[RMDB]
RNA sequence: GGGAACGACUCGAGUAGAGUCGAAAACUUGGAGGUAGAGCACUGUUUGGACUAGGGGCCCCCAUCGGGUUACCGAAUUCAGACAAACUCCGAAUGCCAAAGACUUAUCCGUGGGAGUCAGACUGCGGUCGUACUUGCAAUUCGUUGCAAGUACGACAAAAGAAACAACAACAACAAC
Reactivity to DMS in 0.01 (KOAc 150mM, MgCl2 10mM, bicine 150mM(pH8.5), 24C), signal-to-noise 2, nucleotides 027 to 126: c070u000u000g010g000a030g000g010u030a030g000a040g030c060a190c170u000g010u010u000u000g000g010a040c000u010a300g000g020g000g000c030c000c000c210c300a110u000c130g010g010g010u010u000a120c000c020g010a140a060u000u000c010a060g000a030c040a010a040a160c030u010c010c020g010a100a090u000g010c040c030a010a060a120g000a070c020u000u000a030u000c020c030g000u000g020g000g010a050g030u010c150a030g050a150c020u000g010c140g000